This 177-nucleotide RNA was probed chemically with DMS and 2A3. The data come from the RNA Mapping Database (RMDB), library OK2TST. Conditions: 150 mM KOAc, 10 mM MgCl2 and 150 mM bicine (pH 8.5), 24 C. For DMS, 1,866 sequencing reads were counted.
RNA sequence: GGGAACGACUCGAGUAGAGUCGAAAAGGAGGAGGUCGGACGUCGCUUGCUACAGCAUCCUCAUCUUCUUCACGCAGAUGCGCACCAGCCUAAGAGUCCGUUCAUGUAAUAGAUCCGAGGAUAGUACAUGUUGACGUCAUUUCGAUGACGUCAACAUAAAAGAAACAACAACAACAAC
Reactivity to DMS in 0.01 (KOAc 150mM, MgCl2 10mM, bicine 150mM(pH8.5), 24C), signal-to-noise 2, nucleotides 027 to 126: g010g010a060g000g000a060g000g020u000c060g010g000a040c090g030u010c040g020c050u000u000g030c040u010a080c110a130g030c080a100u000c010c000u000c040a060u000c010u010u000c030u000u000c110a130c140g000c070a100g010a060u010g000c070g010c100a080c050c060a060g040c060c060u010a060a120g010a080g000u010c000c050g010u000u000c040a040u000g010u010a070a050u010a040g010a060u010c050c060g000a070g020g000a100u000a080g020u000a080c080
Reactivity to 2A3 in 0.01 (KOAc 150mM, MgCl2 10mM, bicine 150mM(pH8.5), 24C), signal-to-noise 1, nucleotides 027 to 126: g120g000a000g040g000a030g000g000u070c010g000g010a020c000g050u090c000g000c030u010u140g070c040u080a040c030a130g040c000a050u030c000c030u020c000a060u050c020u050u000c000u060u080c060a010c080g070c000a030g030a130u110g060c030g000c040a010c020c020a020g060c000c000u080a110a000g030a020g000u000c070c000g040u040u070c070a080u190g010u090a120a040u050a160g000a060u000c070c030g010a030g000g030a000u060a170g080u120a050c030